The record gives the reactivity of an RNA of 177 nucleotides to DMS and 2A3. The data come from the RNA Mapping Database (RMDB), library M2PK90.

[RMDB]
RNA sequence: GGGAACGACUCGAGUAGAGUCGAAAAAAUUAGGGUGUGAGUGUAUCUCUCUCCCAGCCGAUUCGCGCAGCCAUUUUUUUUGAUUUUAUUUGGGUUAGCUGCGCGAAUUGGCUGGCGUUCCCGCAAAGACUAAUUUCUAGUUCGCUAGAAAUUAGUCAAAAGAAACAACAACAACAAC
Reactivity to DMS in 0.01 (KOAc 150mM, MgCl2 10mM, bicine 150mM(pH8.5), 24C), signal-to-noise 2, nucleotides 027 to 126: a070a070u010u010a050g010g000g020u010g010u000g010a040g010u020g000u000a080u000c030u000c020u010c060u010c080c000c010a020g020c000c010g010a020u000u000c000g010c000g010c000a010g030c010c050a000u030u000u000u020u020u000u040u000g010a090u020u000u010u000a060u010u020u000g010g000g000u000u000a090g000c000u010g000c000g030c010g000a010a010u000u000g010g010c000u000g000g000c010g000u000u000c010c000c000g010c250a080a080a120
Reactivity to 2A3 in 0.01 (KOAc 150mM, MgCl2 10mM, bicine 150mM(pH8.5), 24C), signal-to-noise 2, nucleotides 027 to 126: a000a030u240u150a100g010g030g000u050g010u020g030a030g020u120g050u160a200u020c040u000c010u000c010u000c030c000c010a000g000c000c000g000a010u000u010c010g000c000g000c000a020g050c000c020a030u070u000u030u030u050u050u100u280g100a090u080u120u050u270a130u060u120u050g080g060g010u070u140a030g020c010u010g000c000g000c000g000a000a000u000u000g000g000c030u000g000g000c010g000u000u000c000c020c000g000c030a070a110a000
Background:
The RNA was probed in 150 mM KOAc, 10 mM MgCl2 and 150 mM bicine (pH 8.5) at 24 C. 2A3 adducts were read by reverse transcription with SuperScript II with manganese. For DMS the reverse transcriptase was MarathonRT.